[RMDB]
RNA sequence: GGGAACGACUCGAGUAGAGUCGAAAAUCUUCACUCCUGGCCUAGUCUGUGUCCUUGCGGAGGCUGGCUUUGCUGUUUGAGGUUUUGGUCCUUUAGGACAGGGGACUGCCUUCCUGGAAAGUGGUCUUGUUUCCGAUCUGUUCGCAGAUCGGAAACAAAAAGAAACAACAACAACAAC
Reactivity to 2A3 in 0.01 (KOAc 150mM, MgCl2 10mM, bicine 150mM(pH8.5), 24C), signal-to-noise 1, nucleotides 027 to 126: u010c030u030u000c010a010c050u040c000c000u000g040g060c010c000u010a020g010u030c000u050g180u020g040u000c080c050u070u250g140c130g000g000a000g000g000c080u010g010g020c020u010u000u090g110c010u040g020u010u000u120g020a040g010g100u010u010u060u180g130g000u050c010c000u030u050u110a060g000g080a020c000a040g010g030g000g010a000c020u000g000c000c030u040u010c010c000u030g060g060a000a020a000g040u060g030g030u000c000u000